RNA sequence: GGGAACGACUCGAGUAGAGUCGAAAAGAUAUGGAACCAGGAUAGCUUCAACAGCUCGGAAACGAGACAUGAAGACUAUCUGGUUCCUAAGUCAAAACGUCACAGAGAGUUCGCUCUCUGUGACGAACACCUAGAGCUACUUCGGUAGCUCUAGGUGAAAAGAAACAACAACAACAAC
Reactivity to 2A3 in 0.01 (KOAc 150mM, MgCl2 10mM, bicine 150mM(pH8.5), 24C), signal-to-noise 2, nucleotides 027 to 126: g010a000u070a060u190g010g000a010a000c000c010a010g130g160a030u000a000g000c010u000u000c010a110a130c050a180g050c010u010c000g010g000a050a060a070c020g000a000g020a040c040a090u090g010a000a010g090a070c000u000a000u030c000u000g000g010u000u000c000c000u010a020a020g030u010c000a000a000a070a150c020g010u000c010a000c010a000g020a010g030a000g000u120u140c270g050c190u000c000u000c000u000g010u020g010a000c000g000a000a000
Reactivity to DMS in 0.01 (KOAc 150mM, MgCl2 10mM, bicine 150mM(pH8.5), 24C), signal-to-noise 1, nucleotides 027 to 126: g010a020u000a300u030g000g000a000a000c000c010a040g020g010a020u000a020g020c000u000u000c010a010a110c220a080g020c000u010c010g020g000a090a100a170c010g000a000g030a020c050a130u000g000a020a010g010a210c010u000a030u000c000u000g010g000u000u000c000c000u000a010a040g000u010c040a020a030a080a160c000g020u000c010a010c000a000g020a000g000a060g010u020u020c270g000c020u000c000u000c000u000g020u000g000a000c000g010a010a020